[RMDB]
RNA sequence: GGGAACGACUCGAGUAGAGUCGAAAAGUUAUGCUCUCGCUGCCUAAUGGCGGUGCGGGAAACCCACUCUAAAGUCCUUAGGGUUAGCCCCUUAAGGCGGGGUUCGGAGGGACCUGGCAACAGAAGCUGAAACUGUGCACAUUCGUGUGCACAGUAAAGUCCCAAUAAACUUCGGUUUAUUGGGACUAAAAGAAACAACAACAACAAC
Reactivity to 2A3 in 0.01 (KOAc 150mM, MgCl2 10mM, bicine 150mM(pH8.5), 24C), signal-to-noise 1, nucleotides 027 to 156: g080u130u170a120u260g060c000u000c000u000c000g000c020u050g010c020c050u300a300a180u260g030g010c000g000g080u010g030c010g000g000g030a020a030a010c010c010c010a040c030u160c030u140a080a040a300g300u030c010c000u010u000a010g000g020g000u000u000a010g000c030c000c000c000u010u010a000a000g000g000c020g000g000g000g000u000u000c030g030g090a140g060g070g000a000c000c000u010g230g030c000a010a010c010a030g050a050a000g000c070u130g040a160a040a000c000u000g000u000g040c010a000c000a020u070u090c190g090u050g000u000g000c000a000c000a000g000u000a000a000
Chemical mapping of a 207-nucleotide RNA with 2A3. Reactivities are rounded to 0.1 and cut off at 0 and 3. Reactivities are given for positions 27 through 156. The 2A3 profile rests on 550 reads.